[RMDB]
RNA sequence: GGGAACGACUCGAGUAGAGUCGAAAAUGGGAUGGCCUGAGGCUGGGAAUCACUGUGUAGCGGACCAGCUCAUGUUGACGGAACGUCCGCACUAAGCUUGACAUCAAUAUGGGUGCCAUGGAGGAGUCCACGGCAUUCAGGUUGGCCAAGGAGGGACCCAAUAGUACUGCUUCGGCAGUACUAUUGGAAAAGAAACAACAACAACAAC
Reactivity to 2A3 in 0.01 (KOAc 150mM, MgCl2 10mM, bicine 150mM(pH8.5), 24C), signal-to-noise 4, nucleotides 027 to 156: u090g010g000g030a030u050g030g030c040c060u070g050a060g070g000c040u020g000g010g060a050a060u130c040a060c090u060g010u020g030u210a020g010c010g010g010a020c030c030a040g020c020u020c030a060u130g140u190u160g050a070c060g010g040a140a030c040g010u000c010c020g020c000a020c050u070a050a000g050c000u030u060g030a060c010a080u120c050a050a080u070a060u120g020g000g000u010g000c000c000a010u030g000g010a040g060g020a050g120u010c010c000a010c010g000g000c000a000u020u000c000a000g020g000u030u030g030g000c020c020a010a010g020g010a060g020g030g010a030c000
Reactivity to DMS in 0.01 (KOAc 150mM, MgCl2 10mM, bicine 150mM(pH8.5), 24C), signal-to-noise 2, nucleotides 027 to 156: u000g020g000g020a090u010g020g050c050c000u000g020a150g000g000c020u010g020g020g010a130a120u000c060a070c030u000g010u010g010u000a120g050c070g010g010a090c000c010a100g000c030u010c050a110u000g020u000u000g010a180c080g020g010a060a060c080g010u000c000c010g020c010a070c070u010a070a150g020c030u000u000g000a100c000a040u010c030a040a080u000a070u000g000g000g030u000g010c020c000a030u010g000g000a080g030g030a290g020u000c000c010a010c000g000g030c010a040u000u000c020a030g030g040u000u000g000g000c030c010a060a070g000g010a120g000g000g000a160c150